[RMDB]
RNA sequence: GGGAACGACUCGAGUAGAGUCGAAAAAUUGUAUGAAUAGGGUAUACCCAAAAUAUACACGAAAGCAUCGUUGUAAAUACAUGAUUUUAGGUGUAUGAUUAGGGUGUAUAUUAAAUGGUUUUGAAAAUCGAUAUGCAGAUUUCGAUCUGCAUAUCGAAAAAGAAACAACAACAACAAC
Reactivity to DMS in 0.01 (KOAc 150mM, MgCl2 10mM, bicine 150mM(pH8.5), 24C), signal-to-noise 3, nucleotides 027 to 126: a120u000u030g000u030a070u000g000a090a090u020a120g040g000g030u000a010u010a010c000c000c000a050a060a050a060u010a030u000a010c020a010c000g000a030a030a040g010c040a000u000c200g050u000u000g010u040a070a110a060u020a000c030a010u010g010a030u010u000u000u010a080g030g040u000g000u000a000u000g030a040u020u030a180g000g000g030u000g010u010a000u010a080u030u000a020a060a080u020g010g020u000u010u000u000g020a060a060a060a110
Reactivity to 2A3 in 0.01 (KOAc 150mM, MgCl2 10mM, bicine 150mM(pH8.5), 24C), signal-to-noise 3, nucleotides 027 to 126: a000u300u160g080u110a160u080g160a080a070u060a110g100g030g010u010a010u000a000c000c000c020a020a020a040a040u050a000u000a000c010a000c030g100a030a000a010g050c030a000u030c110g000u020u030g120u080a180a000a000u300a040c000a000u020g050a050u020u000u000u080a160g130g070u060g000u000a010u010g100a140u140u130a060g000g000g000u020g000u000a010u030a010u020u150a040a050a000u240g010g030u000u000u010u080g060a030a030a010a010
The record gives the reactivity of an RNA of 177 nucleotides to DMS and 2A3. For 2A3 the reverse transcriptase was SuperScript II with manganese.